[RMDB]
RNA sequence: GGGAACGACUCGAGUAGAGUCGAAAAUCCGGCGCGAACUAGCGACGUCGAAGGCUUUGACGGUGCACGGGCUUUUUGUUUGUGCACGUCGUUGCCGAGCUAGGAUUUACUCGACGAAAGCGUUGGAGGGACGUUCUCACUUCGGUGAGGGCGUCCCAAAAGAAACAACAACAACAAC
Reactivity to DMS in 0.01 (KOAc 150mM, MgCl2 10mM, bicine 150mM(pH8.5), 24C), signal-to-noise 5, nucleotides 027 to 126: u000c000c000g000g000c000g010c030g030a130a130c020u000a010g000c010g000a120c110g030u010c040g010a040a070g000g010c010u000u000u010g010a020c000g010g030u010g020c000a010c010g000g000g010c000u000u030u030u050u040g000u000u000u000g030u010g000c010a010c000g010u000c000g020u000u000g010c000c010g010a130g010c010u000a020g000g000a170u050u020u020a100c130u010c010g020a030c020g000a160a090a130g000c010g010u000u010g000g000a150
Reactivity to 2A3 in 0.01 (KOAc 150mM, MgCl2 10mM, bicine 150mM(pH8.5), 24C), signal-to-noise 8, nucleotides 027 to 126: u030c010c000g010g000c010g000c020g030a110a070c000u020a030g030c020g190a160c040g060u060c040g080a100a030g010g000c010u070u030u040g000a010c040g190g090u060g000c000a000c000g030g020g000c010u100u180u050u190u300g030u010u000u030g000u000g000c000a000c010g000u000c010g020u010u010g000c010c000g000a000g010c020u050a020g010g030a030u060u130u150a120c050u060c070g060a080c020g080a200a100a050g050c020g020u020u010g010g020a040
Conditions: 150 mM KOAc, 10 mM MgCl2 and 150 mM bicine (pH 8.5), 24 C. This 177-nucleotide RNA was probed chemically with DMS and 2A3. For DMS, 15,130 sequencing reads were counted. For 2A3 the reverse transcriptase was SuperScript II with manganese. DMS adducts were read by reverse transcription with MarathonRT.